[RMDB]
RNA sequence: GGGAACGACUCGAGUAGAGUCGAAAACUGUAGGUUUUUCAUAAAUAGCUCUUAUUAUUUUGAGAUACAUUCCAUCAAUACCUAGUUUAUUGAGAGUUUUUCACAUGAAGGGCUGUGGAAUUUUGUGAUAUAUCGUACAGUUCGCUGUACGAUAUAUAAAAGAAACAACAACAACAAC
Reactivity to DMS in 0.01 (KOAc 150mM, MgCl2 10mM, bicine 150mM(pH8.5), 24C), signal-to-noise 6, nucleotides 027 to 126: c030u010g020u010a130g010g010u000u000u010u010u000c030a060u000a070a090a050u000a040g000c020u000c010u000u000a090u000u000a080u010u010u000u000g010a040g000a040u000a020c040a100u010u010c120c130a180u010c010a020a010u000a010c050c130u000a120g010u010u010u000a010u010u010g000a060g010a110g000u000u000u000u000u000c010a040c250a040u000g010a030a030g000g010g020c030u000g010u010g000g010a070a130u010u000u000u000g020u000g010
Reactivity to 2A3 in 0.01 (KOAc 150mM, MgCl2 10mM, bicine 150mM(pH8.5), 24C), signal-to-noise 2, nucleotides 027 to 126: c010u050g110u160a120g010g160u140u070u050u100u000c000a010u090a080a120a050u050a070g000c020u010c000u030u070a090u250u080a110u050u300u080u080g040a010g000a000u020a040c070a110u110u000c030c020a060u000c010a020a000u000a040c000c050u090a090g050u140u140u030a020u010u050g010a030g000a000g030u000u020u000u050u050c020a060c010a050u040g040a000a000g010g020g030c010u000g000u040g060g050a090a090u130u020u020u190g080u040g030
The data come from the RNA Mapping Database (RMDB), library OK2TST. Structure probing data (DMS and 2A3) for a 177-nucleotide construct. DMS adducts were read by reverse transcription with MarathonRT. Reactivities are given for positions 27 through 126.